Chemical mapping of a 177-nucleotide RNA with 2A3 and DMS. The RNA was probed in 150 mM KOAc, 10 mM MgCl2 and 150 mM bicine (pH 8.5) at 24 C. For DMS, 3,959 sequencing reads were counted. Values cover nucleotides 27 to 126.
RNA sequence: GGGAACGACUCGAGUAGAGUCGAAAAAGGAUUUCCAGAAGAAGAUGCCAUUCGUUUGAUGAGAAAUAAAAAGGAAUAUCGAAAAUUCGAGUGGCUGAAGCUGAAGCAGCUACUUUCGAAGUAACAGUAUGAAGGCCAAAUUCGUUUGGCCUUCAUAAAAAGAAACAACAACAACAAC
Reactivity to 2A3 in 0.01 (KOAc 150mM, MgCl2 10mM, bicine 150mM(pH8.5), 24C), signal-to-noise 2, nucleotides 027 to 126: a030g220g000a080u000u050u000c020c010a010g020a070a030g000a000a000g080a020u060g000c010c010a000u020u000c070g020u040u010u050g140a250u050g050a100g140a080a090a050u280a060a090a010a000a000g220g010a100a080u110a020u150c070g050a050a060a000a000u030u040c010g000a000g040u000g000g000c000u000g000a000a000g000c030u100g010a050a000g060c030a000g050c030u010a060c000u100u060u110c050g070a090a020g020u040a140a000c070a000g110
Reactivity to DMS in 0.01 (KOAc 150mM, MgCl2 10mM, bicine 150mM(pH8.5), 24C), signal-to-noise 3, nucleotides 027 to 126: a060g000g030a190u000u010u000c000c000a140g000a070a100g000a140a070g000a200u010g030c010c000a050u020u000c040g020u000u010u010g020a030u020g010a280g000a070a030a180u010a030a030a070a070a110g000g030a080a090u020a110u010c010g010a050a110a020a060u000u020c000g010a000g040u010g000g000c000u000g000a080a070g030c030u020g010a140a080g000c060a060g010c000u000a030c040u000u020u000c030g000a060a080g000u020a030a080c140a080g000